[RMDB]
RNA sequence: GGGAACGACUCGAGUAGAGUCGAAAAGACGCCUGUGUGGCGAAACGAGCAAUGGGAUAAGCCGCAAUAGAAGAUGAGAUGGAAGCGGCAAGAUAGAAUGCUCGCAAAAAGAUCCAUCUCACAGAGAAGGUAAUACGAGGUUCGCCUCGUAUUACCUAAAAGAAACAACAACAACAAC
Reactivity to DMS in 0.01 (KOAc 150mM, MgCl2 10mM, bicine 150mM(pH8.5), 24C), signal-to-noise 2, nucleotides 027 to 126: g000a210c030g000c010c030u020g030u020g000u010g040g040c000g000a060a120a100c120g000a110g040c070a060a070u020g000g000g010a050u040a070a130g040c010c010g000c050a230a190u040a080g020a090a040g000a190u000g010a010g000a030u000g000g010a020a170g020c010g010g000c000a010a000g000a110u040a090g000a150a130u000g000c010u000c010g000c170a120a080a020a070a080g040a220u000c000c000a000u000c000u000c000a010c070a090g020a170g030a070
Reactivity to 2A3 in 0.01 (KOAc 150mM, MgCl2 10mM, bicine 150mM(pH8.5), 24C), signal-to-noise 3, nucleotides 027 to 126: g070a000c020g080c020c030u200g060u080g090u200g160g000c000g000a060a080a020c010g000a010g010c030a080a090u170g020g040g180a030u020a090a000g020c000c000g000c010a000a100u080a120g070a120a010g110a160u020g000a000g000a000u000g000g020a100a000g010c000g030g010c020a030a000g080a020u140a070g150a140a030u090g000c030u080c030g030c110a160a110a000a010a000g050a020u020c000c000a000u000c000u030c020a010c000a000g110a000g040a120
An RNA of 177 nucleotides, treated with DMS and 2A3 and read out base by base. For DMS, 2,833 sequencing reads were counted. For 2A3 the reverse transcriptase was SuperScript II with manganese. The RNA was probed in 150 mM KOAc, 10 mM MgCl2 and 150 mM bicine (pH 8.5) at 24 C.